The record gives the reactivity of an RNA of 207 nucleotides to 2A3. The data come from the RNA Mapping Database (RMDB), library M2RFPK. The RNA was probed in 150 mM KOAc, 10 mM MgCl2 and 150 mM bicine (pH 8.5) at 24 C.

[RMDB]
RNA sequence: GGGAACGACUCGAGUAGAGUCGAAAAGCGUAACGGCUGGGUGUAACCCAACUCUAGGUGUGCUGAUUAGCGGGCUUGACUCCGUAACAAAUAGGCACUGGUGGUAAAAAGCAUACCACCUACUCACAAAGCUCCAAAUUCUUCGGAAUUUGGAGAAGAAUGCGUUAUCGUUCGCGAUAACGCAUUCAAAAGAAACAACAACAACAAC
Reactivity to 2A3 in 0.01 (KOAc 150mM, MgCl2 10mM, bicine 150mM(pH8.5), 24C), signal-to-noise 2, nucleotides 027 to 156: g020c020g010u020a030a020c060g060g000c020u010g000g070g020u070g050u130a120a110c000c000c030a030a120c050u130c070u110a070g000g090u020g030u030g060c000u020g020a160u060u020a000g070c000g000g000g040c030u040u170g030a130c040u020c040c010g050u040a030a020c030a020a090a060u090a070g030g000c040a000c080u020g000g000u000g000g050u030a050a100a050a040a060g040c000a010u000a020c000c000a000c000c000u030a060c040u030c000a120c040a080a140a010g040c000u010c000c000a000a000a000u000u000c000u010u020c110g130g000a000a000u010u000u000g000g020a000g000a000a000